An RNA of 177 nucleotides, treated with DMS and 2A3 and read out base by base. For 2A3, 11,463 sequencing reads were counted. It was measured as part of the RMDB library OK2TST. Values cover nucleotides 27 to 126. The RNA was probed in 150 mM KOAc, 10 mM MgCl2 and 150 mM bicine (pH 8.5) at 24 C.
RNA sequence: GGGAACGACUCGAGUAGAGUCGAAAAGGCCCCCGUGGGCACGAUCCACGCGUUCGGCGGCAGCAACGCGCCGGCCAACUACGUGCCCCUGGACGGCCGGCAGCUCUCGCGCACCGAGUACGCCGCCGCGUACAGGUUUAUUCGUAAACCUGUACGCAAAAGAAACAACAACAACAAC
Reactivity to DMS in 0.01 (KOAc 150mM, MgCl2 10mM, bicine 150mM(pH8.5), 24C), signal-to-noise 7, nucleotides 027 to 126: g010g010c020c000c010c050c020g020u010g000g000g030c030a020c080g000a230u000c100c070a050c090g030c170g010u010u010c060g020g030c010g020g000c020a150g000c160a090a080c180g010c070g000c010c010g010g020c020c010a090a240c130u000a060c040g010u000g000c020c030c050c080u000g010g020a070c250g010g020c000c010g000g000c040a070g010c030u010c020u000c030g010c140g010c170a160c180c030g000a030g010u010a080c110g000c000c000g020c040c030
Reactivity to 2A3 in 0.01 (KOAc 150mM, MgCl2 10mM, bicine 150mM(pH8.5), 24C), signal-to-noise 4, nucleotides 027 to 126: g120g000c010c010c020c000c020g000u060g000g000g000c020a010c070g010a040u060c080c020a070c090g080c060g070u120u170c050g020g010c000g030g010c040a030g040c040a110a070c090g000c020g010c030c000g000g000c020c010a070a070c070u180a050c020g040u040g000c020c010c000c010u030g030g020a030c050g010g000c010c000g010g010c040a030g010c010u000c010u000c010g020c040g000c040a120c060c030g010a020g010u030a040c040g000c010c000g020c040c030